[RMDB]
RNA sequence: GGGAACGACUCGAGUAGAGUCGAAAAGCACAUGUAAGGACACCUAUCGACCCAUACAGCAACUGCGUAAUAUCCAUUACCAGUCUAGAACAGCCCAAGCAGCCUCCUUGCGUGCAGCUGAUUGGUCAGGACAGGGUUAAUUCGUUAACCCUGUCCUAAAAGAAACAACAACAACAAC
Reactivity to DMS in 0.01 (KOAc 150mM, MgCl2 10mM, bicine 150mM(pH8.5), 24C), signal-to-noise 2, nucleotides 027 to 126: g010c030a060c020a050u000g010u010a020a090g000g010a050c110a070c060c010u000a090u000c040g000a070c020c000c040a120u000a050c100a060g000c070a060a060c010u000g000c210g020u010a010a010u000a070u050c190c220a070u000u000a040c020c020a020g020u000c070u010a100g000a030a060c140a040g010c080c020c020a090a100g020c050a020g000c060c090u000c020c000u000u000g030c080g010u000g000c080a080g020c010u010g010a030u000u000g000g020u000c120
Reactivity to 2A3 in 0.01 (KOAc 150mM, MgCl2 10mM, bicine 150mM(pH8.5), 24C), signal-to-noise 2, nucleotides 027 to 126: g020c000a040c020a060u090g040u080a050a010g030g020a000c030a040c060c040u080a070u110c030g020a050c020c000c010a050u080a100c020a080g040c020a030a090c000u040g050c080g050u020a030a020u040a040u090c110c010a000u010u000a010c000c000a000g020u000c050u100a100g040a070a060c030a030g000c060c000c020a010a040g010c000a000g010c000c010u050c000c040u100u050g000c050g020u030g020c020a010g020c000u010g040a060u010u050g050g070u050c020

This 177-nucleotide RNA was probed chemically with DMS and 2A3.
The reactions ran in a buffer of 150 mM KOAc, 10 mM MgCl2 and 150 mM bicine (pH 8.5), at 24 C.
The data come from the RNA Mapping Database (RMDB), library OK2TRN.